[RMDB]
RNA sequence: GGGAACGACUCGAGUAGAGUCGAAAAUAAAUGACGCGGCCUGAUUGACUGAUCGUCACCGUGGCAUUGGUCUGUGCAAUACCGCUAAUUUGUGGGGCGUAGCCACGCAGCUCCCACGGUAACAUUCAGUCAUGGUGUGGUUCGCCACACCAUGACUAAAAGAAACAACAACAACAAC
Reactivity to 2A3 in 0.01 (KOAc 150mM, MgCl2 10mM, bicine 150mM(pH8.5), 24C), signal-to-noise 1, nucleotides 027 to 126: u070a000a080a060u020g040a010c070g000c000g060g000c010c030u080g040a110u110u000g010a020c010u040g000a050u030c100g000u090c020a000c050c020g000u000g020g000c030a060u060u070g000g020u010c070u070g130u010g120c000a070a090u030a220c010c000g050c090u060a110a240u110u050u160g020u050g000g020g050g000c060g140u060a030g040c070c000a010c020g000c000a010g000c000u060c060c000c000a000c070g000g040u000a000a040c030a060u110u120c040
Reactivity to DMS in 0.01 (KOAc 150mM, MgCl2 10mM, bicine 150mM(pH8.5), 24C), signal-to-noise 2, nucleotides 027 to 126: u000a040a080a070u030g000a080c130g030c040g000g010c050c110u010g030a120u000u000g010a090c040u040g000a090u000c070g000u030c050a050c030c040g030u000g000g060c080a110u000u000g020g000u020c040u020g010u000g040c070a080a140u010a120c030c020g000c050u020a130a120u000u000u000g080u010g000g000g000g000c020g000u010a100g010c100c080a030c120g000c060a080g060c110u000c120c000c000a020c020g010g000u000a020a040c110a090u000u000c060